[RMDB]
RNA sequence: GGGAACGACUCGAGUAGAGUCGAAAAGUCGGGCAUCCCUAAAGCCUAGACCUGCCCCCAGGCAGGCACGAUCGGCGAAGGAUGCGGCUGCUCGCGAAACUUCUCCAACGAUCCGCCGGCCUCGACGGGGGCUAGAGAGCUUCGGCUCUCUAGCCCCAAAAGAAACAACAACAACAAC
Reactivity to 2A3 in 0.01 (KOAc 150mM, MgCl2 10mM, bicine 150mM(pH8.5), 24C), signal-to-noise 1, nucleotides 027 to 126: g000u010c000g060g000g000c000a080u150c060c010c030u150a280a150a000g000c020c000u080a180g010a080c000c000u000g000c010c000c000c080c000a000g020g000c000a000g080g000c040a110c140g030a020u100c030g000g060c020g000a010a010g000g000a040u150g050c050g010g010c140u220g070c010u080c080g030c020g000a180a100a100c070u130u000c030u020c000c050a150a090c050g050a050u010c000c020g010c060c030g030g000c000c000u000c030g020a160c150g000